[RMDB]
The record gives the reactivity of an RNA of 177 nucleotides to DMS and 2A3. The RNA was probed in 150 mM KOAc, 10 mM MgCl2 and 150 mM bicine (pH 8.5) at 24 C. The DMS profile rests on 1,982 reads. For DMS the reverse transcriptase was MarathonRT.
RNA sequence: GGGAACGACUCGAGUAGAGUCGAAAAUGAUGGCCCAAGGACAGUAUUGUAGGCCUAUCAGUUAGCACUGUCUUGUUAUUUGUCUGUGGGACCUAAUAGAAGAAGCAGCUCUGACUCUUUAAGGCAGCUAGCGGUUAUUGUUCGCAAUAACCGCUAGAAAAGAAACAACAACAACAAC
Reactivity to DMS in 0.01 (KOAc 150mM, MgCl2 10mM, bicine 150mM(pH8.5), 24C), signal-to-noise 2, nucleotides 027 to 126: u010g000a140u010g020g000c010c010c020a080a150g020g000a060c070a070g000u010a090u010u000g000u000a050g030g040c050c020u000a050u020c020a060g010u010u000a070g000c150a110c030u000g000u000c030u000u010g010u000u000a070u000u000u010g010u020c030u000g030u010g010g010g010a070c050c100u000a080a090u010a090g000a060a080g010a050a060g000c020a010g000c010u000c030u000g010a070c030u000c060u000u000u000a080a050g000g010c030a100g010
Reactivity to 2A3 in 0.01 (KOAc 150mM, MgCl2 10mM, bicine 150mM(pH8.5), 24C), signal-to-noise 1, nucleotides 027 to 126: u110g060a050u120g050g000c040c020c020a000a040g100g000a050c090a050g110u220a100u150u180g070u090a000g020g070c000c020u010a040u050c000a040g040u090u160a030g000c040a020c020u000g000u050c000u040u060g130u040u080a090u010u120u170g040u000c050u010g110u190g050g030g000a110c010c070u040a090a070u080a110g090a100a010g020a050a000g080c010a000g000c000u040c020u000g040a090c000u090c020u130u080u110a080a000g030g020c000a020g060